[RMDB]
RNA sequence: GGGAACGACUCGAGUAGAGUCGAAAAGUAUCUCUUCUACCCUCAUCGGUAGAUGUUUGCAAUUAAUACAUCGUUUAUUCCAGAACAGCUUCGCCGGUCGUCAGGAAGAGGGAAUUCUGAAGAUGGGUGCCGUUUUAAUAUUCGUAUUAAAACGGCAAAAAGAAACAACAACAACAAC
Reactivity to DMS in 0.01 (KOAc 150mM, MgCl2 10mM, bicine 150mM(pH8.5), 24C), signal-to-noise 6, nucleotides 027 to 126: g000u020a050u020c060u000c000u010u000c010u000a100c040c000c010u010c180a070u010c190g010g000u030a020g000a030u000g000u020u020u020g020c180a070a070u020u020a110a060u020a050c060a080u020c100g020u010u000u020a070u020u010c080c040a110g010a080a060c090a100g000c080u000u010c090g000c020c030g000g020u000c050g010u000c130a050g010g010a050a100g000a050g020g010g000a060a090u000u010c050u010g010a060a040g000a070u010g000g000g010
Reactivity to 2A3 in 0.01 (KOAc 150mM, MgCl2 10mM, bicine 150mM(pH8.5), 24C), signal-to-noise 7, nucleotides 027 to 126: g080u070a150u060c020u010c000u060u020c010u030a030c000c000c010u060c010a090u050c020g010g000u020a050g040a020u040g050u030u110u070g070c040a050a040u080u120a140a070u090a080c050a140u090c050g020u030u060u040a100u110u000c050c020a010g040a100a040c020a030g090c040u090u100c050g030c030c000g030g010u030c020g030u040c030a020g030g070a090a070g020a060g040g020g060a030a040u090u040c050u040g040a050a020g040a080u090g030g030g040

Conditions: 150 mM KOAc, 10 mM MgCl2 and 150 mM bicine (pH 8.5), 24 C. Chemical mapping of a 177-nucleotide RNA with DMS and 2A3. DMS adducts were read by reverse transcription with MarathonRT. The 2A3 profile rests on 6,061 reads. The data come from the RNA Mapping Database (RMDB), library OK1LIB.